Chemical mapping of a 207-nucleotide RNA with DMS and 2A3. The RNA was probed in 150 mM KOAc, 10 mM MgCl2 and 150 mM bicine (pH 8.5) at 24 C. For 2A3 the reverse transcriptase was SuperScript II with manganese. 2A3 is a SHAPE reagent: it acylates the 2'-hydroxyl of flexible nucleotides of all four kinds.
RNA sequence: GGGAACGACUCGAGUAGAGUCGAAAAUGAUGUUACAAUUCGUUGUAACAUCAAUUUUACCUUUGUGAUAUUGUCGCUUUGAUCCACUGCCCAUUGGGCAGGGGGAGCGAUUGUAUCACUCUGGUGCGACUGAGUCCCGUUUUCGAACGGGACUCAACCUUUAAUAGCUCUUCGGAGCUAUUAAAGGAAAAGAAACAACAACAACAAC
Reactivity to DMS in 0.01 (KOAc 150mM, MgCl2 10mM, bicine 150mM(pH8.5), 24C), signal-to-noise 1, nucleotides 027 to 156: u000g010a020u010g020u000u000a010c000a030a060u000u010c300g070u000u000g000u000a010a000c000a000u000c000a000a010u000u000u000u000a090c010c010u000u010u020g040u000g000a030u000a000u000u010g050u000c040g010c010u000u010u020g020a190u000c030c000a080c010u000g010c000c000c040a300u000u010g080g000g060c000a020g010g000g030g000g000a000g030c000g010a020u010u000g010u000a030u000c000a010c010u000c060u010g010g020u000g020c040g030a190c080u000g010a020g010u000c000c000c000g030u000u000u000u000c280g010a040a030c000g000g030g000a000c000u000c000a010a020
Reactivity to 2A3 in 0.01 (KOAc 150mM, MgCl2 10mM, bicine 150mM(pH8.5), 24C), signal-to-noise 5, nucleotides 027 to 156: u050g000a000u000g000u000u000a000c010a030a030u030u120c240g070u110u020g000u000a000a000c000a000u000c000a000a000u010u030u030u100a010c000c000u000u020u010g020u010g000a000u000a010u000u050g020u000c000g020c060u210u130u090g110a110u130c010c030a170c240u000g010c010c040c100a300u150u300g000g000g000c000a000g000g000g000g000g010a010g000c000g010a010u000u010g000u000a000u000c000a000c000u000c010u000g000g020u030g050c100g110a110c110u080g000a000g000u000c000c000c000g000u010u010u050u050c170g110a010a000c010g000g030g000a000c000u000c000a000a010